[RMDB]
RNA sequence: GGGAACGACUCGAGUAGAGUCGAAAACUGAGGCGGGAGCAGCCGGGAACUCUGGACCCCGGGAGGACACCAACCCUCAGCAGCCCACCACCGAGGGCCACCACCGCGGAAAGAAACUGGUGCAGGCCUCUGCGUCCGGAGUGGCUCAGUCUAAGGAAUAUUAUUACGUCUUCGGACGUAAUAAUAUAAAAGAAACAACAACAACAAC
Reactivity to 2A3 in 0.01 (KOAc 150mM, MgCl2 10mM, bicine 150mM(pH8.5), 24C), signal-to-noise 1, nucleotides 027 to 156: c000u010g000a010g030g010c090g060g100g000a090g050c070a040g010c050c030g020g030g010a090a050c110u120c150u300g070g110a050c010c030c010c030g000g020g000a090g050g020a030c010a080c040c000a020a020c010c010c010u000c010a000g000c000a030g040c010c000c000a010c000c100a020c000c060g040a090g000g010g000c000c010a020c010c000a050c020c010g070c100g060g050a050a140a030g090a190a120a050c090u140g040g000u120g020c050a030g130g050c000c040u120c080u080g020c030g040u140c050c020g000g020a040g000u000g000g000c020u030c010a010g050u010c060u090a070a030g060g040a110